[RMDB]
RNA sequence: GGGAACGACUCGAGUAGAGUCGAAAAGCAUUCGCCUUCGGGCGAAUGCAAACAAAACCGGGCAAAAAUUAAAGGUACUAGUUCCGAAAAAGUACCUAAACAAAAGAGCUUGGUUCGCCAAGCUCAAGACCAUUUAAUAGUUCGCUAUUAAAUGGUCAAAAGAAACAACAACAACAAC
Reactivity to 2A3 in 0.01 (KOAc 150mM, MgCl2 10mM, bicine 150mM(pH8.5), 24C), signal-to-noise 4, nucleotides 027 to 126: g000c010a000u000u000c000g030c010c020u010u070c230g040g000g000c000g000a000a000u010g010c000a000a000a020c020a010a110a000a030c010c010g040g040g000c050a080a150a120a100a170u180u210a300a300a060g000g010u000a000c000u020a020g160u140u160c100c050g130a160a090a030a010a000g000u000a000c000c000u080a040a060a000c040a020a120a050a050g000a000g000c000u000u010g010g010u050u040c150g030c020c000a000a000g000c000u000c000a000a010
Reactivity to DMS in 0.01 (KOAc 150mM, MgCl2 10mM, bicine 150mM(pH8.5), 24C), signal-to-noise 2, nucleotides 027 to 126: g000c010a000u000u000c000g000c020c000u000u010c150g010g040g050c000g030a000a000u000g030c010a000a060a080c050a090a040a100a140c020c010g020g000g030c120a040a040a090a080a120u010u010a060a090a040g010g000u010a000c000u000a070g000u010u000c140c080g000a050a030a050a070a020g000u000a000c000c000u010a040a040a040c110a040a060a120a110g000a030g000c000u000u000g000g000u000u010c110g030c000c010a010a010g000c000u000c010a030a040